[RMDB]
RNA sequence: GGGAACGACUCGAGUAGAGUCGAAAAUGGAAGGAUUCCGCAGCGCUGCCUCUAUUAUUAUACCGUAAAUCUUUUUAAAUUCUGGAACUAAUUAUAUAGAGGAUAUGUCUCAAUUUGUUCUGCAUUACUGCAAGUAGUGUUUCGACACUACUUGCAGAAAAGAAACAACAACAACAAC
Reactivity to 2A3 in 0.01 (KOAc 150mM, MgCl2 10mM, bicine 150mM(pH8.5), 24C), signal-to-noise 2, nucleotides 027 to 126: u080g020g010a040a060g030g060a090u030u030c010c010g000c000a020g090c060g030c040u030g010c000c000u010c000u030a010u050u000a000u010u090a100u030a050c000c000g040u000a030a160a140u090c030u080u130u070u100u260a160a180a090u180u050c120u290g010g010a030a000c000u000a040a030u240u050a050u030a040u030a160g050a000g000g010a010u070a010u110g060u000c010u000c040a010a080u120u000u090g030u040u000c010u000g030c060a100u000u160a010

Structure probing data (2A3) for a 177-nucleotide construct.
The 2A3 profile rests on 535 reads.